[RMDB]
RNA sequence: GGGAACGACUCGAGUAGAGUCGAAAACGCGAAAAGGUGUAUGCCGUUCGUUGUCGUGUCACGACGAACCCACUCUAUGAGCCGACCUCUGAGCACAUUACUGUCCUUUUGACGCGCACCAACGACGGGCUUGUAUAGUCUUCGGACUAUACAAGCCAAAAGAAACAACAACAACAAC
Reactivity to 2A3 in 0.01 (KOAc 150mM, MgCl2 10mM, bicine 150mM(pH8.5), 24C), signal-to-noise 2, nucleotides 027 to 126: c060g000c010g030a000a000a010a180g030g000u080g040u050a090u150g070c050c040g000u020u030c020g010u000u070g020u030c040g030u020g110u150c070a010c080g060a000c010g010a060a060c000c000c010a040c040u000c040u050a130u150g040a000g060c040c020g040a040c020c000u040c050u040g000a000g000c010a020c010a080u090u150a120c050u100g050u090c000c000u070u100u010u090g060a030c000g020c000g030c030a030c040c030a040a030c030g140a010c050g030
Reactivity to DMS in 0.01 (KOAc 150mM, MgCl2 10mM, bicine 150mM(pH8.5), 24C), signal-to-noise 2, nucleotides 027 to 126: c120g030c040g000a020a050a090a060g000g000u000g010u010a050u020g030c070c090g060u000u020c020g010u010u000g010u010c020g010u000g030u010c090a100c160g000a050c070g000a040a110c020c070c010a060c090u030c040u010a040u000g020a140g000c030c040g010a090c080c050u010c030u000g010a090g000c060a040c130a020u000u010a060c130u020g000u020c020c030u000u000u000u000g000a070c000g010c020g030c130a070c040c020a060a030c090g000a070c190g000
An RNA of 177 nucleotides, treated with 2A3 and DMS and read out base by base. For 2A3 the reverse transcriptase was SuperScript II with manganese. The RNA was probed in 150 mM KOAc, 10 mM MgCl2 and 150 mM bicine (pH 8.5) at 24 C. Values are in units of 0.01, from 0 to 300, in steps of 10. The 2A3 profile rests on 1,611 reads.